[RMDB]
RNA sequence: GGGAACGACUCGAGUAGAGUCGAAAAGAGUGGGGGUGACAUGUUGGGCAGGCUCUGGUGUUAACCACAGAGUCGCGGCCCGGGCUGCCUGACCACCGAUCCCCGAAAGCAUCCUGCCACUGGCAUGGACAGUUCCUGUAUUCGUACAGGAACUGUCAAAAGAAACAACAACAACAAC
Reactivity to 2A3 in 0.01 (KOAc 150mM, MgCl2 10mM, bicine 150mM(pH8.5), 24C), signal-to-noise 6, nucleotides 027 to 126: g220a020g020u030g000g030g010g010g000u040g030a040c060a140u260g020u080u160g040g000g000c020a020g020g020c000u000c000u060g130g120u120g060u220u260a090a050c090c010a010c010a050g030a000g000u010c030g010c080g130g030c000c000c000g000g010g000c020u020g000c000c010u080g100a110c000c000a000c010c020g000a040u090c000c000c000c000g110a110a050a000g010c020a070u080c010c010u030g040c050c000a210c190u120g000g010c060a080u120g030
Reactivity to DMS in 0.01 (KOAc 150mM, MgCl2 10mM, bicine 150mM(pH8.5), 24C), signal-to-noise 4, nucleotides 027 to 126: g000a110g030u030g010g010g010g000g020u010g010a040c070a050u040g010u040u050g030g000g050c030a220g010g000c000u000c020u010g040g000u030g000u010u030a070a150c300c010a070c010a050g000a000g010u010c000g010c230g010g000c010c000c000g020g000g000c020u020g020c000c000u000g000a240c030c010a010c020c010g020a090u010c030c000c010c080g000a070a040a090g010c080a030u000c030c020u010g000c000c010a110c110u020g000g020c030a050u030g000